[RMDB]
RNA sequence: GGGAACGACUCGAGUAGAGUCGAAAAUCGAGGUUGAGGAGGAACUCUGCAAGCAGGUGAGGUCCAGAGAUAUAUCCAGAGAGGAGUGGAAGGGCUCGGAGACCUACAGCCCCAAUACUGCAUAUGGCGAAGGAGAGUACUUCGGUACUCUCCUUCGAAAAGAAACAACAACAACAAC
Reactivity to DMS in 0.01 (KOAc 150mM, MgCl2 10mM, bicine 150mM(pH8.5), 24C), signal-to-noise 3, nucleotides 027 to 126: u050c020g040a070g010g000u030u000g020a100g000g020a160g000g020a070a060c040u000c060u000g030c110a120a060g020c060a070g020g010u000g000a040g010g020u000c050c030a040g010a080g000a120u000a090u010a050u000c000c010a030g010a100g040a080g010g000a060g020u030g000g010a130a060g000g020g000c010u010c080g010g020a150g020a040c110c020u000a080c190a080g000c010c000c000c040a030a130u070a120c050u040g000c040a050u050a050u020g010g000
Reactivity to 2A3 in 0.01 (KOAc 150mM, MgCl2 10mM, bicine 150mM(pH8.5), 24C), signal-to-noise 2, nucleotides 027 to 126: u100c030g080a020g140g040u190u120g010a000g000g030a090g020g000a060a060c030u000c020u070g020c040a030a080g070c000a000g000g060u040g080a030g000g000u000c040c000a030g030a000g000a030u030a000u030a060u150c040c040a000g040a000g000a000g220g010a050g020u040g000g000a010a020g060g010g030c000u020c000g060g000a100g020a010c000c000u040a020c000a030g070c000c020c000c000a070a030u120a190c070u070g050c050a050u040a060u110g160g000
Background:
Structure probing data (DMS and 2A3) for a 177-nucleotide construct. For 2A3, 860 sequencing reads were counted. For DMS the reverse transcriptase was MarathonRT. Reactivities are rounded to 0.1 and cut off at 0 and 3. The RNA was probed in 150 mM KOAc, 10 mM MgCl2 and 150 mM bicine (pH 8.5) at 24 C.